[RMDB]
RNA sequence: GGGAACGACUCGAGUAGAGUCGAAAACGAGCGCGUAUUUCGGAGCAUGUGUUUCGGGGGCAGGCAUGGCUACAUAAAGCUAGAGAAGUGGGUCGAAGUGGGGCGUAAAGCAAGGACGGUCCAAGGGCGAGUCGACCUCUCCAUCGGCACGAGGACGGAAACAAUCAUAGUUCGCUAUGAUUGUUUCAAAAGAAACAACAACAACAAC
Reactivity to DMS in 0.01 (KOAc 150mM, MgCl2 10mM, bicine 150mM(pH8.5), 24C), signal-to-noise 1, nucleotides 027 to 156: c030g010a060g020c020g030c070g060u000a100u000u000u000c000g030g030a110g030c110a050u000g030u000g000u000u000u010c080g030g040g030g000g030c050a010g030g050c020a080u010g010g000c000u000a080c100a130u000a070a100a140g000c000u010a120g000a220g000a060a160g000u000g010g010g050u100c070g010a040a130g020u000g010g090g020g000c120g030u000a040a050a110g020c050a030a100g010g000a100c110g010g010u000c030c050a100a200g030g000g020c010g000a090g010u000c010g000a130c010c000u000c090u000c010c050a110u000c010g020g050c050a110c050g030a060g060g000a120c080g000
Reactivity to 2A3 in 0.01 (KOAc 150mM, MgCl2 10mM, bicine 150mM(pH8.5), 24C), signal-to-noise 3, nucleotides 027 to 156: c040g000a010g020c040g000c010g020u060a030u020u090u050c050g030g000a010g040c040a040u060g060u030g040u040u170u160c110g020g000g000g000g000c030a020g010g020c030a020u090g000g000c000u040a020c040a120u200a120a100a000g020c030u090a030g000a010g010a220a050g010u140g020g040g000u090c040g010a080a020g010u030g010g020g000g000c010g010u070a100a060a030g040c060a030a050g060g000a020c000g000g080u030c040c020a030a040g070g000g010c030g010a010g010u010c010g010a080c010c010u020c030u000c000c010a110u090c040g030g000c040a010c070g000a010g010g010a010c070g000